An RNA of 177 nucleotides, treated with DMS and 2A3 and read out base by base. The RNA was probed in 150 mM KOAc, 10 mM MgCl2 and 150 mM bicine (pH 8.5) at 24 C.
RNA sequence: GGGAACGACUCGAGUAGAGUCGAAAAGAACUCACCAGCAAAUGUUUACGACAAGAUUCGACAUUUGCAAAAUACGUAGCGAUCUUCCAGAAUCUUGUCGAAACGUUCCCAAUCGCUACGCCCUAAACAGGGCAGUUUAAUUCGUUAAACUGCCCUGAAAAGAAACAACAACAACAAC
Reactivity to DMS in 0.01 (KOAc 150mM, MgCl2 10mM, bicine 150mM(pH8.5), 24C), signal-to-noise 2, nucleotides 027 to 126: g000a100a060c100u000c050a130c050c010a080g000c130a100a130a060u000g020u010u000u000a280c070g000a010c000a000a030g020a010u000u010c010g000a060c300a090u010u010u000g020c100a100a010a030a050u010a050c040g040u000a000g000c000g000a000u000c060u000u040c180c210a080g000a020a000u000c000u000u000g010u010c010g000a020a040a080c050g000u000u020c000c000c000a060a030u000c020g000c010u010a020c030g010c000c010c000u010a030a060a160
Reactivity to 2A3 in 0.01 (KOAc 150mM, MgCl2 10mM, bicine 150mM(pH8.5), 24C), signal-to-noise 2, nucleotides 027 to 126: g030a060a040c000u010c050a080c040c030a000g090c020a050a120a170u150g090u110u160u190a080c010g000a000c000a000a000g020a000u000u000c000g020a020c120a210u160u160u200g070c020a040a010a000a050u050a010c010g000u000a010g000c010g010a020u000c060u130u080c200c060a040g010a000a000u000c020u040u000g000u020c000g080a070a040a010c040g000u000u000c010c000c030a000a010u010c030g000c000u010a010c010g020c010c000c000u030a020a030a020

The data come from the RNA Mapping Database (RMDB), library M2PK90.